[RMDB]
Structure probing data (DMS and 2A3) for a 207-nucleotide construct.
RNA sequence: GGGAACGACUCGAGUAGAGUCGAAAAUUGUCUGAUGAUGCCAGUGUCCGCUAUGCGUGUACACGUAUUUGCUUUCACCAAAAUCUGCGCGGAAAUCUGCUGCCAUCGCUGCAAGUCGCGUGUCUGCCUUUUUCAUCGUGUGACCGUGAGUGUAUCCCAGUUACUAGUACUUCGGUACUAGUAACUGAAAAGAAACAACAACAACAAC
Reactivity to DMS in 0.01 (KOAc 150mM, MgCl2 10mM, bicine 150mM(pH8.5), 24C), signal-to-noise 3, nucleotides 027 to 156: u000u000g000u010c070u010g000a090u000g010a090u000g030c080c050a060g030u000g010u010c030c020g020c020u010a090u000g010c030g030u000g020u000a080c100a030c030g020u000a050u000u000u010g020c050u000u000u010c040a080c090c030a040a050a080a110u000c060u000g010c100g020c030g020g030a050a080a110u000c050u000g040c010u010g020c030c020a060u000c070g020c050u000g000c040a070a110g010u000c050g030c030g020u000g010u000c010u000g030c020c050u010u000u030u000u000c110a100u020c050g010u010g020u000g010a040c010c020g020u000g030a080g020u000g000u000a120u000c020c040
Reactivity to 2A3 in 0.01 (KOAc 150mM, MgCl2 10mM, bicine 150mM(pH8.5), 24C), signal-to-noise 8, nucleotides 027 to 156: u090u040g060u040c080u060g070a150u040g010a020u030g120c070c030a040g010u010g040u080c020c020g010c050u060a030u130g040c080g020u050g080u160a030c060a020c140g020u030a090u040u080u080g050c030u050u080u140c080a090c080c040a030a060a040a150u080c080u180g030c020g010c000g060g050a030a080a080u080c080u110g010c010u010g020c040c010a040u070c040g000c020u030g010c020a030a060g060u040c010g000c010g030u120g030u060c040u050g070c020c020u090u140u030u090u130c100a140u060c060g040u050g050u050g110a020c010c010g020u020g040a040g020u090g030u040a050u040c020c010
It was measured as part of the RMDB library OK3TST. The RNA was probed in 150 mM KOAc, 10 mM MgCl2 and 150 mM bicine (pH 8.5) at 24 C. 2A3 adducts were read by reverse transcription with SuperScript II with manganese.